This 177-nucleotide RNA was probed chemically with DMS and 2A3. Source: RMDB library OK1LIB, as collected in RNAgym. The 2A3 profile rests on 838 reads. The DMS profile rests on 1,017 reads.

[RMDB]
RNA sequence: GGGAACGACUCGAGUAGAGUCGAAAAGUCGCAACGAGUUCGCGACGGGACUCGAAGGCAAGGAGCUACGCGGAAAUGCGUAGCGAAGAAGGAUAUCGAUUAGUGUUCAACGGUAUCCGGAACACAAGGCAUGCUAGUCGUUCGCGGCUAGCAUGCCAAAAGAAACAACAACAACAAC
Reactivity to DMS in 0.01 (KOAc 150mM, MgCl2 10mM, bicine 150mM(pH8.5), 24C), signal-to-noise 1, nucleotides 027 to 126: g080u000c050g000c000a260a300c100g000a020g000u000u000c030g050c010g000a070c060g000g010g010a060c000u000c000g000a130a180g000g000c000a040a090g050g030a300g000c000u000a000c000g040c000g000g000a090a070a000u220g000c000g000u000a000g000c000g000a020a140g000a300a140g000g060a000u000a000u000c000g050a100u060u000a030g030u000g000u000u030c030a190a110c000g000g000u000a050u000c000c000g050g000a150a000c140a170c300a040a240
Reactivity to 2A3 in 0.01 (KOAc 150mM, MgCl2 10mM, bicine 150mM(pH8.5), 24C), signal-to-noise 1, nucleotides 027 to 126: g190u110c190g020c050a030a010c000g060a000g000u030u000c030g050c060g240a000c020g060g010g030a030c000u000c000g000a010a090g100g000c090a000a000g130g110a020g000c010u000a000c000g010c080g210g180a000a030a130u140g000c000g000u000a000g000c000g000a020a010g010a000a070g000g000a000u000a000u000c080g120a230u110u110a040g070u060g120u230u050c060a000a000c000g040g000u000a000u000c000c000g010g050a130a000c020a000c060a160a050